[RMDB]
RNA sequence: GGGAACGACUCGAGUAGAGUCGAAAAAAUUUAGAUUAUCCAGGAGUAGCGGUGAAAUUCGUAGAGAUCUGGUGGAUAAUGAACCGGUGGCGAAGGCGAAAGAUAACCGCUGAAAUGCUGAAGUGAAAUCAUUAGGCAACUUCGGUUGCCUAAUGAUAAAAGAAACAACAACAACAAC
Reactivity to DMS in 0.01 (KOAc 150mM, MgCl2 10mM, bicine 150mM(pH8.5), 24C), signal-to-noise 2, nucleotides 027 to 126: a070a050u000u000u010a080g020a090u000u000a060u000c030c000a110g000g000a120g000u000a040g030c030g000g000u000g010a060a120a060u000u000c010g000u010a120g020a150g010a160u000c000u000g020g010u000g020g010a210u020a040a060u000g000a140a030c050c020g040g050u000g000g000c300g010a220a120g010g010c010g000a000a030a000g000a080u010a210a010c000c010g020c000u000g010a060a040a080u000g000c020u010g000a050a130g010u030g000a110a090